[RMDB]
RNA sequence: GGGAACGACUCGAGUAGAGUCGAAAAUAGUGGCCUUCAGUGCGUACUCACCGAAGCUGACCUUACUACCACGAUGAGCCAGACCACGGUUGUGGCCGGUCAUUUGUUUGCGGAACUUCGUACGCUAGUGCAUCGGGCUAUUCGUAGCCCGAUGCACAAAAGAAACAACAACAACAAC
Reactivity to DMS in 0.01 (KOAc 150mM, MgCl2 10mM, bicine 150mM(pH8.5), 24C), signal-to-noise 2, nucleotides 027 to 126: u000a020g050u000g000g000c070c010u000u020c120a090g030u000g030c060g020u000a030c100u010c070a080c060c040g000a050a020g000c180u000g000a110c030c010u000u000a120c070u000a130c080c020a080c160g010a060u000g050a120g020c010c010a150g020a060c040c020a070c040g040g000u000u000g030u000g000g000c040c010g030g020u010c010a000u000u000u010g050u000u000u000g010c040g010g030a120a090c100u010u010c110g000u000a060c030g020c040u000a090
Reactivity to 2A3 in 0.01 (KOAc 150mM, MgCl2 10mM, bicine 150mM(pH8.5), 24C), signal-to-noise 1, nucleotides 027 to 126: u110a010g080u130g020g050c000c030u080u120c160a070g110u010g060c000g000u010a000c060u100c110a080c000c020g010a000a000g000c110u110g070a170c000c020u050u090a050c040u030a090c000c040a080c080g030a040u080g090a040g170c000c060a050g040a180c080c020a090c070g300g000u160u270g030u090g050g000c040c000g020g000u030c030a090u110u070u130g080u120u010u060g060c060g070g010a080a110c060u100u110c070g000u060a010c000g000c060u020a050